[RMDB]
RNA sequence: GGGAACGACUCGAGUAGAGUCGAAAAUGAGGCUUUCGAGAAAUUCGUAAGUCUCUUUGCUACUUUAAUGACUUUUUCUGGUAAUGUAGAUCUUGAUGCGUUAGCUAGUGAUAUUUUUGACACUCCUACUAAAUGCGUAGUUCGCUACGCAUUUAGUAAAAGAAACAACAACAACAAC
Reactivity to 2A3 in 0.01 (KOAc 150mM, MgCl2 10mM, bicine 150mM(pH8.5), 24C), signal-to-noise 3, nucleotides 027 to 126: u080g010a000g000g020c010u000u020u070c010g020a030g020a110a300a150u130u020c010g020u010a000a000g000u000c000u000c000u030u030u010g000c000u010a060c020u150u090u080a120a030u150g070a070c010u070u070u040u100u020c020u060g060g010u060a090a060u050g050u060a050g010a060u030c020u010u060g030a040u080g020c020g050u010u010a020g020c030u040a010g020u010g050a040u020a110u120u110u050u040u090g030a030c010a020c070u030c010c000u010
Reactivity to DMS in 0.01 (KOAc 150mM, MgCl2 10mM, bicine 150mM(pH8.5), 24C), signal-to-noise 2, nucleotides 027 to 126: u010g000a020g010g000c000u000u010u000c000g000a010g000a090a130a190u000u000c010g010u000a010a000g010u000c000u000c000u030u000u000g000c060u000a040c050u000u000u000a080a100u000g000a080c080u000u000u000u000u000c040u010g020g010u000a110a070u010g030u010a040g010a030u000c030u000u000g010a100u010g030c020g010u010u010a040g020c110u010a040g030u000g000a080u000a010u000u000u000u000u000g000a140c190a090c070u010c020c010u000